Structure probing data (DMS) for a 177-nucleotide construct. The RNA was probed in 150 mM KOAc, 10 mM MgCl2 and 150 mM bicine (pH 8.5) at 24 C. DMS adducts were read by reverse transcription with MarathonRT. For DMS, 735 sequencing reads were counted. The data come from the RNA Mapping Database (RMDB), library OK2TST.

[RMDB]
RNA sequence: GGGAACGACUCGAGUAGAGUCGAAAAUCGAGGCGGGCGACAUCGGAGGGGCCGACCUCGUCCAUCACCAGGAUGUACGGCUGCUCCGGCUCGCGCGGCGCCUCCACCCCGCAGAGCCUGGCCAGCAAUUAGGGUCGUGAUUCGUCACGACCCUAAUAAAAGAAACAACAACAACAAC
Reactivity to DMS in 0.01 (KOAc 150mM, MgCl2 10mM, bicine 150mM(pH8.5), 24C), signal-to-noise 1, nucleotides 027 to 126: u020c060g000a040g020g000c020g050g010g010c020g010a030c210a050u000c030g000g010a030g000g010g020g030c010c000g020a090c150c120u000c000g020u000c010c030a070u000c300a150c120c300a080g000g000a040u040g000u020a170c000g000g020c010u000g000c000u000c000c020g000g010c300u000c060g000c020g020c050g030g010c010g000c010c010u020c020c120a090c070c020c040c050g020c090a060g000a030g000c020c000u000g020g000c060c020a150g010c090a050